This 177-nucleotide RNA was probed chemically with DMS and 2A3. The RNA was probed in 150 mM KOAc, 10 mM MgCl2 and 150 mM bicine (pH 8.5) at 24 C. The data come from the RNA Mapping Database (RMDB), library OK1LIB.

RNA sequence: GGGAACGACUCGAGUAGAGUCGAAAAGACGCCUGUGUGGCGAAGCGAGCAUGAGAAAGAGCCGCACAGUCCAUCUAAUAUAAAGCGGCCAGAUGGAUUGCUCGCAAAAAGAUCCAUCUCACUGAGAAAUUUAGGGCCUAUUCGUAGGCCCUAAAUUAAAAGAAACAACAACAACAAC
Reactivity to DMS in 0.01 (KOAc 150mM, MgCl2 10mM, bicine 150mM(pH8.5), 24C), signal-to-noise 3, nucleotides 027 to 126: g000a070c080g000c040c000u000g000u000g020u010g000g010c000g020a120a120g000c000g030a000g000c020a110u000g000a300g030a130a190a170g010a160g010c010c000g000c010a070c160a070g040u000c070c060a090u060c060u070a150a120u020a080u010a050a100a050g110c010g010g010c110c120a160g000a100u010g000g010a080u010u000g030c000u000c030g000c010a000a040a040a060a040g000a100u020c030c010a030u010c040u000c080a090c070u010g000a110g000a040
Reactivity to 2A3 in 0.01 (KOAc 150mM, MgCl2 10mM, bicine 150mM(pH8.5), 24C), signal-to-noise 1, nucleotides 027 to 126: g120a000c000g020c000c000u080g000u030g050u080g050g010c000g000a010a040g000c000g000a000g000c020a030u130g010a020g160a110a110a000g090a130g000c000c010g010c000a040c020a010g050u060c010c000a020u040c000u220a200a060u190a080u000a190a220a000g030c040g090g030c000c000a000g040a020u020g010g000a000u000u040g000c000u000c000g000c000a030a030a030a030a030g060a030u000c000c000a040u000c000u030c010a110c140u190g020a030g130a070
Values are in units of 0.01, from 0 to 300, in steps of 10. 2A3 adducts were read by reverse transcription with SuperScript II with manganese.